[RMDB]
Source: RMDB library TTRDEL, as collected in RNAgym.
Structure probing data (2A3 and DMS) for a 177-nucleotide construct.
The DMS profile rests on 7,393 reads.
DMS adducts were read by reverse transcription with MarathonRT.
RNA sequence: GGGAACGACUCGAGUAGAGUCGAAAAGAUAUGGACCGGUCAGCUUUUGACGAAGUGUCGGAAACGACCUUCGAUAAGCUGCUACGGUCCUAAGUCAAGCCUCGCCAUUGUUCGCAAUGGCGAGGAAGUAUUGGGACUAGUUCGCUAGUCCCAAUACAAAAGAAACAACAACAACAAC
Reactivity to 2A3 in 0.01 (KOAc 150mM, MgCl2 10mM, bicine 150mM(pH8.5), 24C), signal-to-noise 5, nucleotides 027 to 126: g020a010u050a020u130g000g000a010c010c010g070g060u150c010a010g000c030u080u230u300u300g160a120c030g000a010a010g070u090g010u300c010g000g020a030a040a010c000g000a010c000c000u000u000c000g000a000u030a120a000g000c010u000g010c020u190a180c010g010g010u000c000c000u010a030a000g020u000c040a040a050g030c000c000u000c000g000c000c000a010u010u020g050u090u110c300g020c180a000a010u000g000g000c000g000a010g000g000a000a010
Reactivity to DMS in 0.01 (KOAc 150mM, MgCl2 10mM, bicine 150mM(pH8.5), 24C), signal-to-noise 5, nucleotides 027 to 126: g010a040u000a300u000g000g000a010c010c010g040g010u000c010a010g000c010u000u000u010u000g010a230c190g010a010a010g010u000g030u000c000g020g000a080a090a170c000g010a010c000c000u000u000c000g010a110u000a010a030g000c000u000g010c120u000a140c000g010g010u000c000c000u000a000a060g010u000c030a160a190g010c000c000u000c000g000c000c000a010u000u000g010u000u010c230g010c000a000a010u000g000g000c000g020a000g000g000a000a020